[RMDB]
RNA sequence: GGGAACGACUCGAGUAGAGUCGAAAAUAUGGCUGGAGCAGGAGUCCGUGCAGAAAACCUGCACCACUUCCUCGAUGCCGGAGUGCUGGAAGUCCAUAGCUCCGCGGGAGCGUGGCAAGCCUCACCGACUCGCACAAUCAUUCGUGAUUGUGCGAGUAAAAGAAACAACAACAACAAC
Reactivity to DMS in 0.01 (KOAc 150mM, MgCl2 10mM, bicine 150mM(pH8.5), 24C), signal-to-noise 3, nucleotides 027 to 126: u060a060u020g000g020c000u010g030g000a090g050c150a100g010g000a020g000u000c080c300g000u000g000c010a010g010a210a090a100a240c260c000u010g000c000a000c020c250a040c000u010u010c000c000u020c000g010a080u030g010c010c000g000g010a020g040u030g010c010u020g000g000a060a090g040u020c000c010a030u000a120g010c010u010c000c040g050c300g000g010g000a010g030c000g040u000g010g010c050a130a050g010c000c000u000c020a200c080c050g020
Reactivity to 2A3 in 0.01 (KOAc 150mM, MgCl2 10mM, bicine 150mM(pH8.5), 24C), signal-to-noise 4, nucleotides 027 to 126: u280a090u110g020g000c030u050g120g000a060g010c060a060g080g000a000g030u010c070c050g000u010g000c000a000g120a070a130a020a070c010c000u010g000c000a000c000c000a010c010u080u030c000c000u000c000g050a050u140g000c000c000g040g000a030g000u190g010c040u030g000g080a100a080g060u030c000c000a010u040a140g010c010u030c000c030g170c080g140g110g010a000g010c010g000u020g000g000c000a020a010g030c000c000u000c010a050c010c000g000
The data come from the RNA Mapping Database (RMDB), libraries RFM100 and RFMREP. An RNA of 177 nucleotides, treated with DMS and 2A3 and read out base by base. Reactivities are given for positions 27 through 126. The RNA was probed in 150 mM KOAc, 10 mM MgCl2 and 150 mM bicine (pH 8.5) at 24 C.